[RMDB]
RNA sequence: GGGAACGACUCGAGUAGAGUCGAAAAUUCUGCCGUUAAGUUGCAAAAUAAUGAGAUCAAACCUUCAGGUCUAAAAACCAUGGUUGUGUCUGCGGGUCAAGAGCAAACUAACUGUAAUACUAGUUCCGUUAUUGACGUAGUUCGCUACGUCAAUAACAAAAGAAACAACAACAACAAC
Reactivity to DMS in 0.01 (KOAc 150mM, MgCl2 10mM, bicine 150mM(pH8.5), 24C), signal-to-noise 3, nucleotides 027 to 126: u010u000c070u000g010c060c040g010u010u010a020a160g010u010u000g000c050a050a080a090a100u020a060a080u010g010a100g010a020u010c040a050a110a070c040c010u040u010c190a080g010g020u000c060u030a060a100a080a140a040c010c030a070u000g000g030u010u000g000u000g000u000c020u000g010c110g020g010g010u010c050a070a080g010a130g010c030a050a010a070c060u000a040a050c070u010g000u010a030a070u000a070c140u000a080g000u000u000c050c070
Reactivity to 2A3 in 0.01 (KOAc 150mM, MgCl2 10mM, bicine 150mM(pH8.5), 24C), signal-to-noise 3, nucleotides 027 to 126: u040u010c020u020g050c000c010g030u030u040a080a020g020u020u040g010c030a050a090a050a060u180a040a120u140g030a020g000a050u070c050a100a070a040c010c010u100u140c080a040g020g010u000c030u190a050a100a010a000a020c010c000a030u030g070g000u020u030g030u020g030u070c010u040g060c030g010g000g030u020c030a040a020g040a020g080c000a050a000a040c010u030a020a000c000u000g060u050a000a060u050a180c060u040a040g070u060u000c050c030